RNA sequence: GGGAACGACUCGAGUAGAGUCGAAAACUCUGAUUGUUCGCAAUCAGAGAAAUCGUGCUAGUGCUGAUAUUGGCUCAGGCCAUACUGGCAUUACUGCUGACAAAAGGGCUCCCUUCGGGGAGCCCAACACAUUAUUCUUCUUCGGAAGAAUAAUGUGAAAAGAAACAACAACAACAAC
Reactivity to DMS in 0.01 (KOAc 150mM, MgCl2 10mM, bicine 150mM(pH8.5), 24C), signal-to-noise 3, nucleotides 027 to 126: c000u000c000u010g010a010u000u000g010u000u020c240g020c010a000a000u000c000a000g000a010g000a040a070a070u010c120g020u000g030c150u000a030g020u000g010c010u020g010a030u000a030u010u010g020g010c000u000c210a180g010g010c000c000a010u000a010c050u000g010g000c000a000u000u000a010c120u000g010c020u000g010a070c180a040a060a130a120g000g000g010c000u000c000c010c000u000u000c110g010g040g000g000a010g000c010c000c000a000a030
Reactivity to 2A3 in 0.01 (KOAc 150mM, MgCl2 10mM, bicine 150mM(pH8.5), 24C), signal-to-noise 1, nucleotides 027 to 126: c000u020c000u000g020a000u010u010g020u040u070c160g040c090a000a000u000c000a000g000a000g000a020a030a010u090c040g020u060g020c020u010a000g010u000g020c010u010g020a060u020a070u130u160g000g000c030u020c150a170g210g000c000c000a000u010a020c020u020g030g000c010a000u000u020a020c050u040g030c010u040g070a060c070a010a100a040a070g000g010g000c010u010c000c010c000u010u050c190g090g000g000g000a000g000c010c010c000a000a000